[RMDB]
RNA sequence: GGGAACGACUCGAGUAGAGUCGAAAAACGGACUACGGUCCGAAGGGUUCGGAGUACUAGUGUGAAUGCCCGGCUAGUACCCUGUGCUAGUGGUUUAUCUACUGAUGUUCAAUUAAGGGCAUUUGAAAAAAGACUCCUAACUUCGGUUAGGAGUCAAGCAAAUCUAUAGGUUCGCCUAUAGAUUUGCAAAAGAAACAACAACAACAAC
Reactivity to 2A3 in 0.01 (KOAc 150mM, MgCl2 10mM, bicine 150mM(pH8.5), 24C), signal-to-noise 2, nucleotides 027 to 156: a000c020g010g020a010c010u020a020c280g100g000u040c000c020g000a080a050g130g020g040u120u300c030g030g050a050g000u010a000c000u010a000g010u020g030u070g130a060a010u020g000c000c010c020g020g030c000u000a000g010u000a010c000c000c050u080g000u040g080c070u060a040g010u020g070g040u070u250u190a100u220c020u010a020c020u070g100a090u170g120u080u210c140a130a060u190u200a300a300g000g000g000c010a000u050u000u040g000a000a000a000a000a000a000g000a000c000u000c000c000u010a000a010c000u000u060c170g100g000u000u000a000g000g000a010g000u010c000a000a000